This 207-nucleotide RNA was probed chemically with DMS. Values cover nucleotides 27 to 156. Source: RMDB library OK3TST, as collected in RNAgym. The RNA was probed in 150 mM KOAc, 10 mM MgCl2 and 150 mM bicine (pH 8.5) at 24 C.

RNA sequence: GGGAACGACUCGAGUAGAGUCGAAAAAAAAAAUUAGCCAGGUGUGGUAGUGUGUGCCUGUAAUCCCAGCUAUUCGGAGGCUGAGGCAAGAGGAUAUCUUGAAUCCAGGAGGUGGAGGUUGCAUUAAGCUGAGCUUGCAUCAUGGCACUCCAGCCUAUAAAUAAUGGCGUUUCGACGCCAUUAUUUAAAAAGAAACAACAACAACAAC
Reactivity to DMS in 0.01 (KOAc 150mM, MgCl2 10mM, bicine 150mM(pH8.5), 24C), signal-to-noise 1, nucleotides 027 to 156: a020a010a120a040a040a140u020u010a130g000c050c010a090g050g020u000g040u000g040g040u010a000g040u010g010u010g010u010g010c010c000u020g030u000a110a080u020c000c010c000a110g040c040u000a150u000u010c040g020g010a160g000g020c040u010g010a080g010g010c040a040a040g000a040g000g000a040u000a030u010c030u020u000g010a090a080u020c020c030a070g010g010a120g020g030u000g040g010a050g030g020u000u000g000c030a120u000u010a060a070g020c010u020g010a050g010c060u010u000g000c020a100u000c100a070u010g030g000c050a050c030u010c030c010a050g030c000c010u000a230